[RMDB]
RNA sequence: GGGAACGACUCGAGUAGAGUCGAAAAGGAUAGCACUGGCAUCUGCUUGACUUCUGGGGAAGCGUCAGGGAGAUUUUUCUCAUGGUGAAAGGCUAAGCAGGAGCAGGCACUUUACGUGGUGGGAACAAAGGGAGGUGUCACUUACUUUAAACAGCCAAUUCAAGGAUCUAUUCGUAGAUCCUUGAAUAAAAGAAACAACAACAACAAC
Reactivity to 2A3 in 0.01 (KOAc 150mM, MgCl2 10mM, bicine 150mM(pH8.5), 24C), signal-to-noise 5, nucleotides 027 to 156: g050g010a070u060a050g020c030a020c110u070g050g010c030a030u040c030u060g020c020u070u030g050a210c020u040u030c040u100g020g000g020g070a040a020g010c020g060u020c040a020g040g130g010a020g010a030u110u060u010u270u030c020u020c020a060u100g040g000u080g050a110a040a040g060g000c030u040a040a010g030c020a010g010g010a010g000c020a010g000g000c020a020c040u140u180u090a050c090g040u040g010g080u080g030g030g020a080a030c050a110a090a040g030g020g010a070g010g010u040g020u030c010a000c040u050u160a020c010u090u150u100a070a070a020c030a020g060c020c030a020
Reactivity to DMS in 0.01 (KOAc 150mM, MgCl2 10mM, bicine 150mM(pH8.5), 24C), signal-to-noise 2, nucleotides 027 to 156: g010g000a100u000a050g030c030a030c070u000g010g030c040a110u000c050u000g040c010u000u000g010a170c020u000u000c050u020g000g020g000g020a100a120g020c100g050u010c030a070g030g020g010a080g020a090u000u000u000u000u000c020u010c020a130u000g000g030u010g020a080a050a080g010g030c040u000a030a110g000c010a070g030g010a060g020c060a090g020g040c000a030c040u000u020u000a090c050g010u000g000g000u020g000g000g020a040a110c110a100a070a080g010g000g020a030g010g000u000g010u000c020a000c060u000u010a060c040u000u000u000a060a080a100c050a090g020c040c020a080